RNA sequence: GGGAACGACUCGAGUAGAGUCGAAAAAAUGACCACGUGCUAGACGCAGCAGGCUACCCAAUCGCAUUCCUGUAUCCUGUUAAAAAGAAGUUCAACCCGAUUGCCGCCGUAAGAGGCUGAUAUGUCCGAUAGCAAAAUGUUGGUAACUGACAACCUACCCAAGAGUAGAUUUCGAUCUACUCUUGGGAAAAGAAACAACAACAACAAC
Reactivity to DMS in 0.01 (KOAc 150mM, MgCl2 10mM, bicine 150mM(pH8.5), 24C), signal-to-noise 1, nucleotides 027 to 156: a120a060u000g030a170c040c010a060c030g030u000g070c030u000a090g030a150c110g040c010a170g010c000a080g030g030c060u010a030c000c010c030a040a160u010c050g020c070a180u000u000c000c000u000g000u000a120u020c040c050u000g040u000u000a010a050a120a080a030g000a070a080g020u000u000c110a070a140c030c010c010g070a090u010u010g040c010c030g070c020c060g000u000a040a100g000a100g000g020c030u030g020a040u000a100u000g030u020c030c020g040a230u000a030g040c070a030a010a080a110u000g010u000u000g010g010u010a060a180c050u000g000a090c020a050a090c010c010u000a300
Reactivity to 2A3 in 0.01 (KOAc 150mM, MgCl2 10mM, bicine 150mM(pH8.5), 24C), signal-to-noise 1, nucleotides 027 to 156: a000a000u080g030a070c010c010a020c090g020u070g030c030u030a080g010a070c050g060c080a030g040c020a010g040g010c020u030a030c000c000c050a020a050u090c080g030c030a080u070u060c000c000u020g000u010a040u020c000c010u030g090u120u130a140a040a010a000a000g070a090a030g050u120u110c030a060a030c000c020c000g060a060u010u190g050c070c030g000c010c000g030u010a070a020g010a030g090g000c000u000g050a080u050a080u240g030u000c000c040g070a100u020a080g000c030a000a090a140a030u080g000u060u040g040g030u020a040a000c010u060g020a020c010a010a000c000c010u050a050
An RNA of 207 nucleotides, treated with DMS and 2A3 and read out base by base. DMS (dimethyl sulfate) methylates the pairing face of unpaired adenines and cytosines. For 2A3, 571 sequencing reads were counted. Values cover nucleotides 27 to 156. Source: RMDB library OK3TST, as collected in RNAgym. The RNA was probed in 150 mM KOAc, 10 mM MgCl2 and 150 mM bicine (pH 8.5) at 24 C. For DMS the reverse transcriptase was MarathonRT.